[RMDB]
RNA sequence: GGGAACGACUCGAGUAGAGUCGAAAAAAAAAAUAGAUCGUUCUAUUAACGAUCUCGCGCGGGUCGUCGGUGGUCGGCGUGCCCACGGACGAACUUACUCGCGCGUAAGUUAAUAAAUCGCCAAAAACAUUGAAGUGUACUUCGGUACACUUCAAUGAAAAGAAACAACAACAACAAC
Reactivity to DMS in 0.01 (KOAc 150mM, MgCl2 10mM, bicine 150mM(pH8.5), 24C), signal-to-noise 2, nucleotides 027 to 126: a000a000a060a090a050a030u010a020g000a010u010c000g020u000u000c250u010a120u000u000a050a010c000g000a040u010c030u000c020g010c000g030c000g000g010g000u010c010g010u000c010g000g040u000g010g010u000c030g020g010c030g070u010g000c200c000c000a010c000g010g020a010c010g010a120a060c140u010u020a080c020u000c010g010c010g000c010g020u000a010a030g020u000u000a040a040u000a030a020a060u010c010g000c050c000a060a020a050a060a130
Reactivity to 2A3 in 0.01 (KOAc 150mM, MgCl2 10mM, bicine 150mM(pH8.5), 24C), signal-to-noise 2, nucleotides 027 to 126: a020a000a050a020a000a000u140a000g000a000u010c000g010u000u070c110u170a300u300u180a040a000c000g000a000u000c020u000c000g000c000g010c000g000g030g000u040c000g000u000c070g060g000u010g010g030u020c130g020g060c010g020u060g040c010c010c000a010c000g050g010a000c000g000a040a010c040u170u170a060c030u110c020g000c050g000c000g000u000a000a000g000u020u010a030a000u060a060a030a010u050c020g000c010c020a000a060a020a020a040